An RNA of 207 nucleotides, treated with 2A3 and read out base by base. The data come from the RNA Mapping Database (RMDB), library M2RFPK. The reactions ran in a buffer of 150 mM KOAc, 10 mM MgCl2 and 150 mM bicine (pH 8.5), at 24 C. For 2A3, 1,007 sequencing reads were counted.
[RMDB]
RNA sequence: GGGAACGACUCGAGUAGAGUCGAAAAGAAAUUACGUUUCCUUUACACUUCUCAAACCGGGAUCAAGAGAAGCAAAGCAUCCCUCAUAUCUACGAUGGAGGGUGUCGUGGAGUAUACUGUACCAAAAAGAGCGAACACGGCUUCGGCCGUGUUCGAAGUGAUACCUUGCGUUCGCGCAAGGUAUCACAAAAGAAACAACAACAACAAC
Reactivity to 2A3 in 0.01 (KOAc 150mM, MgCl2 10mM, bicine 150mM(pH8.5), 24C), signal-to-noise 2, nucleotides 027 to 156: g030a000a050a050u250u050a040c060g030u000u020u030c030c000u040u060u020a010c040a060c000u070u000c010u010c040a130a210a190c060c070g100g080g020a080u060c100a110a050g000a000g020a060a010g010c040a100a010a000g000c020a100u140c000c040c000u000c020a080u050a110u150c080u130a040c130g050a010u050g070g010a030g040g020g000u000g000u040c030g030u020g010g000a010g020u000a010u000a070c100u060g040u100a110c000c020a010a120a000a040a060g130a000g100c000g000a010a000c010a000c000g000g000c030u030u030c160g080g020c010c000g000u000g010u000u010c010g000a040a000